RNA sequence: GGGAACGACUCGAGUAGAGUCGAAAAGCAUUCAGGUGAGGCAGCUCAGGAGUGUUACUAUUGGGUUUGAACAAUCAAGUGAGCCCAAUCAUGUUAGACAAUGCCUUUCUCAAGGAAUUAAGCGAGCCGCUCAUCGCGAAUUCGUUCGCGAUGAGCGAAAAGAAACAACAACAACAAC
Reactivity to DMS in 0.01 (KOAc 150mM, MgCl2 10mM, bicine 150mM(pH8.5), 24C), signal-to-noise 1, nucleotides 027 to 126: g010c040a100u010u010c020a090g020g000u000g060a090g010g000c110a090g000c030u000c070a090g000g000a060g010u010g010u010u000a040c070u000a120u010u000g020g000g010u000u020u010g000a200a070c050a070a160u020c120a030a140g060u000g000a150g010c000c000c010a090a030u000c070a140u000g050u000u000a070g000a020c130a110a070u010g020c000c000u000u000u000c050u000c040a060a170g020g010a050a060u000u000a110a040g010c070g010a070g010c200